[RMDB]
RNA sequence: GGGAACGACUCGAGUAGAGUCGAAAAGCGGUACACUUCGGUGUACCGCAAAACCGGAAUAAACAUGGGCCCAUGAGCCGAAUCGGAAGGGCGUCCGCCCAAAAACGACGCCGUUCGCGGCGUCGAAGUCUUUCACUUAGUUCGCUAAGUGAAAGACAAAAGAAACAACAACAACAAC
Reactivity to 2A3 in 0.01 (KOAc 150mM, MgCl2 10mM, bicine 150mM(pH8.5), 24C), signal-to-noise 2, nucleotides 027 to 126: g010c010g000g000u010a000c010a010c020u040u100c180g000g000u010g000u000a010c000c010g030c000a000a000a000a000c020c010g000g110a140a150u230a060a090a020c050a150u120g050g000g000c030c040c060a100u120g040a040g050c060c040g080a080a090u160c070g040g020a040a000g110g040g000c020g030u050c040c020g010c010c010c010a080a080a000a000a010c010g020a000c000g010c050c010g020u010u060c260g000c020g070g000c000g000u000c000g000a000a000
Reactivity to DMS in 0.01 (KOAc 150mM, MgCl2 10mM, bicine 150mM(pH8.5), 24C), signal-to-noise 2, nucleotides 027 to 126: g000c000g000g010u000a000c000a000c000u010u010c150g020g020u000g000u000a010c000c000g000c000a000a020a030a160c060c030g000g010a110a110u000a070a060a080c090a100u010g000g000g020c020c010c090a130u000g000a170g020c020c010g000a100a070u000c070g000g010a100a110g030g000g000c030g010u000c020c010g000c000c010c000a040a040a060a120a130c030g020a000c010g020c000c000g020u000u000c120g030c000g030g040c000g000u000c000g000a010a050